[RMDB]
Structure probing data (2A3) for a 207-nucleotide construct. Reactivities are rounded to 0.1 and cut off at 0 and 3. High 2A3 reactivity points to a flexible backbone, as in loops and unpaired stretches. The 2A3 profile rests on 377 reads.
RNA sequence: GGGAACGACUCGAGUAGAGUCGAAAAAUCAUAUUCUAACUUUCAUUAGCUACUGCAGAGGAUAGGGACCAUCUGUUUAUUCGCUUCUUAGGUAUUUUGAAUAGGGCUAUAUAAAAAAUGAUGCUUUAAAAUGCGUGUAAUGAUCGUUCCAUUUGAACAUGCCAGGAGUAUUCGUACUCCUGGCAUGAAAAGAAACAACAACAACAAC
Reactivity to 2A3 in 0.01 (KOAc 150mM, MgCl2 10mM, bicine 150mM(pH8.5), 24C), signal-to-noise 1, nucleotides 027 to 156: a010u140c070a050u140a100u120u110c010u050a150a050c030u040u100u080c030a160u090u160a020g000c000u030a040c020u030g000c000a000g040a000g030g060a040u070a090g000g010g000a010c000c000a080u050c010u030g090u020u040u080a050u000u130c030g000c010u060u000c010u080u010a000g000g030u040a060u020u190u070u050g030a070a050u040a110g020g020g000c040u070a020u060a000u020a110a010a000a000a000a040u120g010a110u200g030c020u040u020u070a050a050a060a020u070g040c040g050u110g020u050a100a030u050g010a020u020c000g000u040u000c000c000a010u030u160u270g000a020a000